[RMDB]
RNA sequence: GGGAACGACUCGAGUAGAGUCGAAAAGGUGUGGCCAGGGUAAUGACCUCGGGUAUGGUGACAACGUCAAAGAUGCCACAAUGGGUGAUCCGCAGCCAAGUCCCCUGGAGAAGCGACUUCAUGAUUCUUGCCCAUGACAUGUCGGAGCGGACAGUAUCUCUAAUAUUCGGUUCGCCGAAUAUUAGAGAAAAGAAACAACAACAACAAC
Reactivity to 2A3 in 0.01 (KOAc 150mM, MgCl2 10mM, bicine 150mM(pH8.5), 24C), signal-to-noise 2, nucleotides 027 to 156: g070g010u090g020u040g070g050c060c070a060g070g000g010u100a140a130u160g030a070c010c010u030c050g010g010g060u160a100u120g060g000u020g050a030c060a120a000c140g070u050c030a090a050a070g070a040u090g010c010c020a030c000a090a070u110g030g040g010u030g010a040u030c000c000g000c050a010g020c010c000a030a010g020u020c010c000c010c010u030g000g020a050g010a120a010g050c030g040a050c000u030u020c070a000u070g060a170u170u050c050u100u120g050c000c000c000a020u050g000a000c030a070u030g000u050c020g010g050a030g010c020g020g010a000c010a000g040u060a060u010